[RMDB]
RNA sequence: GGGAACGACUCGAGUAGAGUCGAAAAAUGGUGAUUCGUGGGCUAAUAUUAAAGGAGAUUUCUCAACCUCAGUACCAUUGACAUUUGGGGCCGGAUAAUUCUUUGUUCUGGGGGCUGUCCUGAGUAUUAUGGGAUGUUUAGCAACCUCCCUACCCUCCAUCAUAGGGAAAUUCGUUUCCCUAUGAUGAAAAGAAACAACAACAACAAC
Reactivity to DMS in 0.01 (KOAc 150mM, MgCl2 10mM, bicine 150mM(pH8.5), 24C), signal-to-noise 3, nucleotides 027 to 156: a070u000g020g020u010g000a120u010u000c070g040u010g000g020g000c030u010a080a110u000a120u000u010a060a080a080g010g010a130g000a180u000u000u000c030u000c040a070a110c030c020u010c030a090g020u000a080c040c030a100u000u010g020a090c090a130u000u010u000g020g020g010g040c000c070g010g020a080u000a040a110u010u000c050u000u000u010g000u000u000c060u010g030g020g000g030g040c070u010g020u000c010c030u000g000a150g000u000a060u000u000a070u000g010g020g010a070u000g020u000u000u010a150g040c140a090a040c040c040u000c000c000c010u000a080c030c020c020u000c040
Reactivity to 2A3 in 0.01 (KOAc 150mM, MgCl2 10mM, bicine 150mM(pH8.5), 24C), signal-to-noise 5, nucleotides 027 to 156: a000u070g000g010u060g010a090u100u050c070g010u080g010g030g010c050u060a080a090u070a190u220u190a110a130a080g050g010a060g020a080u060u160u030c060u000c040a060a090c010c000u040c010a010g040u040a060c030c010a050u010u090g050a040c030a060u070u100u130g050g000g010g000c030c030g010g010a020u040a120a060u200u040c040u110u100u120g030u100u040c040u070g030g000g000g020g010c020u030g010u020c010c000u030g000a040g050u110a060u270u050a040u080g000g020g000a020u040g030u010u040u030a030g010c020a010a020c000c020u010c020c010c000u030a060c000c010c000u010c030
This 207-nucleotide RNA was probed chemically with DMS and 2A3. DMS adducts were read by reverse transcription with MarathonRT. The RNA was probed in 150 mM KOAc, 10 mM MgCl2 and 150 mM bicine (pH 8.5) at 24 C.